The record gives the reactivity of an RNA of 177 nucleotides to 2A3 and DMS. The reactions ran in a buffer of 150 mM KOAc, 10 mM MgCl2 and 150 mM bicine (pH 8.5), at 24 C. It was measured as part of the RMDB library M2PK90. 2A3 adducts were read by reverse transcription with SuperScript II with manganese. Reactivities are given for positions 27 through 126.
RNA sequence: GGGAACGACUCGAGUAGAGUCGAAAAUACAAGUACGAAAGUACAAGCCUUAUCAGUUCGGCCUUCUGGUCAAAUUAGCGCUCACCCAGGAGGUCCUUCGCAUGAGGUCGACAAGCGCUAAAAGAAAACGUUUCUUAUAGUUCGCUAUAAGAAACGUAAAAGAAACAACAACAACAAC
Reactivity to 2A3 in 0.01 (KOAc 150mM, MgCl2 10mM, bicine 150mM(pH8.5), 24C), signal-to-noise 3, nucleotides 027 to 126: u190a020c040a150a010g010u000a010c010g030a150a050a000g020u010a000c010a020a020g000c010c000u060u040a070u080c090a120g120u290u300c070g020g000c000c000u000u000c000u000g020g010u050c030a020a060a190u070u020a020g000c000g000c010u000c040a010c000c000c000a000g000g020a010g000g020u040c010c000u060u030c030g010c020a000u030g010a010g000g050u040c050g060a030c050a140a020g000c000g000c000u040a060a050a010a030g080a030a120a010
Reactivity to DMS in 0.01 (KOAc 150mM, MgCl2 10mM, bicine 150mM(pH8.5), 24C), signal-to-noise 4, nucleotides 027 to 126: u010a120c160a120a130g010u000a000c010g000a120a070a180g020u000a010c010a150a190g000c000c010u000u000a060u010c120a140g030u000u010c160g010g000c010c000u000u000c000u000g000g020u000c050a080a080a120u000u000a010g000c000g010c010u000c120a140c300c000c010a020g000g000a000g000g030u000c010c030u010u000c100g030c190a080u000g000a030g000g010u010c080g010a060c180a040a070g000c020g010c010u000a010a050a110a080g000a070a050a070